[RMDB]
RNA sequence: GGGAACGACUCGAGUAGAGUCGAAAACUGCUCUCUUCGUGGCUCUCGCAACCUCUUCUGCAGAUGCUUCAAGCCUUCUGCACCAGAGAAGGGAUGCAGGAUUUGUGGCCUCGGGGGCCGGCAGAUCACCUCUCGUAACAUUCGUGUUACGAGAGGUAAAAGAAACAACAACAACAAC
Reactivity to DMS in 0.01 (KOAc 150mM, MgCl2 10mM, bicine 150mM(pH8.5), 24C), signal-to-noise 3, nucleotides 027 to 126: c020u000g000c010u000c070u010c000u000u000c020g020u030g010g000c010u000c020u010c150g020c050a090a110c050c000u000c010u000u000c030u000g000c000a030g000a030u000g010c020u010u010c250a110a200g030c080c110u010u000c000u000g010c000a060c120c100a110g010a040g020a070a030g010g000g000a130u000g010c010a110g000g000a180u000u010u000g010u000g010g010c010c010u000c080g010g030g000g010g010c190c160g000g020c000a010g010a140u020c090
Reactivity to 2A3 in 0.01 (KOAc 150mM, MgCl2 10mM, bicine 150mM(pH8.5), 24C), signal-to-noise 2, nucleotides 027 to 126: c000u000g010c000u000c000u000c010u130u090c020g020u020g020g010c010u010c010u020c110g020c040a080a090c010c020u080c020u060u000c020u060g010c000a000g000a020u010g020c000u140u220c120a140a040g000c000c000u040u000c000u010g040c030a050c060c080a070g110a000g020a140a050g030g000g010a030u070g010c020a040g000g050a000u120u090u160g170u160g030g000c000c020u010c020g020g000g000g000g040c000c000g030g020c030a000g020a080u130c050